RNA sequence: GGGAACGACUCGAGUAGAGUCGAAAAAGAGGUGCUGCCGAUUACACCACGACGGAUUGGAUACCUACGAGGAGCGGUCCGCCGUGGUUGGUGGGCCGCGUCACCAUAUGACUCUAGUCUGCGGGCAGUAAUACUGAUUAUUCGUAAUCAGUAUUACAAAAGAAACAACAACAACAAC
Reactivity to DMS in 0.01 (KOAc 150mM, MgCl2 10mM, bicine 150mM(pH8.5), 24C), signal-to-noise 9, nucleotides 027 to 126: a090g010a110g010g020u000g010c060u000g010c020c020g000a140u000u010a110c110a120c050c040a120c070g010a140c050g010g000a050u000u000g010g010a080u000a110c080c040u000a080c150g010a150g010g010a140g010c000g000g010u000c000c000g020c000c000g010u000g020g000u010u010g010g020u000g010g010g000c000c010g000c010g000u000c030a080c060c060a080u000a130u010g000a070c080u000c020u000a030g010u000c020u000g010c050g010g000g010c090a110
Reactivity to 2A3 in 0.01 (KOAc 150mM, MgCl2 10mM, bicine 150mM(pH8.5), 24C), signal-to-noise 9, nucleotides 027 to 126: a000g100a040g000g030u060g020c040u030g020c030c010g030a030u040u130a070c070a030c040c020a050c050g080a030c020g040g020a020u030u060g040g010a040u170a240c000c010u050a090c120g070a140g030g010a020g000c000g000g000u000c000c000g000c010c010g030u080g020g070u050u040g000g000u010g000g000g000c000c000g000c000g010u010c000a020c020c010a030u060a070u250g020a020c000u000c010u020a040g040u030c010u040g040c030g020g010g000c020a010